[RMDB]
RNA sequence: GGGAACGACUCGAGUAGAGUCGAAAAGCUAUGGUGCAACUCUUUAAGGCAAUAACGAACUAAUUCUAAGCAAGUAAUGGAGAAAUGCCAGGGUCACUAUCUAGCCAUAAUAGUGCUUGACAGUAAGAGAAUCUGCUACCCUUCGGGGUAGCAGAAACAAAUUCUUCGUGUUCGCACGAAGAAUUUGAAAAGAAACAACAACAACAAC
Reactivity to DMS in 0.01 (KOAc 150mM, MgCl2 10mM, bicine 150mM(pH8.5), 24C), signal-to-noise 1, nucleotides 027 to 156: g020c030u010a000u000g000g030u020g000c020a110a100c050u010c040u010u000u020a080a120g020g000c020a040a060u010a060a150c060g030a140a140c090u000a030a070u000u000c090u000a070a170g050c110a020a170g020u000a060a080u000g010g000a140g020a060a060a130u000g010c000c010a110g000g020g030u000c020a040c000u010a040u010c030u000a110g020c050c110a130u000a030a080u000a050g020u020g000c020u010u000g000a130c050a080g020u010a060a050g000a130g000a090a110u010c000u000g000c000u000a020c000c000c000u000u000c300g120g000g050g030u010a000g020c010a000g000a020a070a090
Reactivity to 2A3 in 0.01 (KOAc 150mM, MgCl2 10mM, bicine 150mM(pH8.5), 24C), signal-to-noise 2, nucleotides 027 to 156: g040c040u040a010u140g020g000u040g000c030a060a060c020u050c030u050u180u100a070a070g030g000c020a060a080u110a110a020c110g020a010a040c070u050a030a100u080u010c010u110a060a090g080c050a020a050g070u110a180a030u170g100g010a060g060a040a110a020u040g010c010c020a010g000g000g030u040c010a020c010u030a050u080c030u000a030g020c000c000a030u040a190a070u060a150g060u020g070c010u050u030g050a040c010a040g030u030a120a000g020a000g040a030a150u020c000u000g000c000u000a000c000c020c000u010u020c170g040g000g030g000u000a000g000c000a000g000a000a000a000
This 207-nucleotide RNA was probed chemically with DMS and 2A3. The 2A3 profile rests on 926 reads. For 2A3 the reverse transcriptase was SuperScript II with manganese. For DMS the reverse transcriptase was MarathonRT. The data come from the RNA Mapping Database (RMDB), library M2RFPK.